RNA sequence: GGGAACGACUCGAGUAGAGUCGAAAAGAGACGAGUUCGCUCGUCUCAAUACCGGGUUGGUGGUCUAGUCUGGUUAUGACACCUCCUUGACAUGGAGGAGGCCGGCAGUUCAAAUCUGCCCCAACCCACCAAGCCUAUCGUGUGUUCGCACACGAAAGGCUGUAUUAAACUUCGGUUUAAUACAGCCAAAAGAAACAACAACAACAAC
Reactivity to DMS in 0.01 (KOAc 150mM, MgCl2 10mM, bicine 150mM(pH8.5), 24C), signal-to-noise 2, nucleotides 027 to 156: g000a050g010a030c010g010a020g020u000u010c290g070c020u000c000g000u000c000u000c010a010a070u000a060c060c040g010g010g020u000u000g010g070u000g000g000u010c060u010a120g000u000c150u000g060g000u010u000a090u010g030a070c020a130c010c010u000c000c000u020u010g000a210c160a190u000g000g020a060g000g010a010g030g020c060c060g000g030c020a040g010u000u000c050a070a300a080u010c010u000g000c010c000c000c000a080a060c030c000c020a040c040c040a030a150g040c030c020u000a040u000c000g020u000g020u000g000u010u000c270g020c010a000c000a010c000g000a010a050a160
Reactivity to 2A3 in 0.01 (KOAc 150mM, MgCl2 10mM, bicine 150mM(pH8.5), 24C), signal-to-noise 6, nucleotides 027 to 156: g000a000g000a000c010g000a010g020u050u100c180g090c090u000c000g000u010c000u000c000a000a000u060a040c020c040g000g000g010u000u000g020g010u020g020g010u020c020u020a030g010u000c050u040g150g130u210u270a060u110g010a000c010a010c000c000u000c020c000u030u080g130a140c100a180u160g050g000a000g000g000a000g000g000c070c020g020g000c000a000g000u020u020c000a000a000a040u000c000u000g000c000c000c010c000a000a010c020c000c010a000c000c020a030a010g080c000c010u130a090u090c000g000u000g000u000g020u020u070c200g020c100a000c000a000c010g020a040a010a010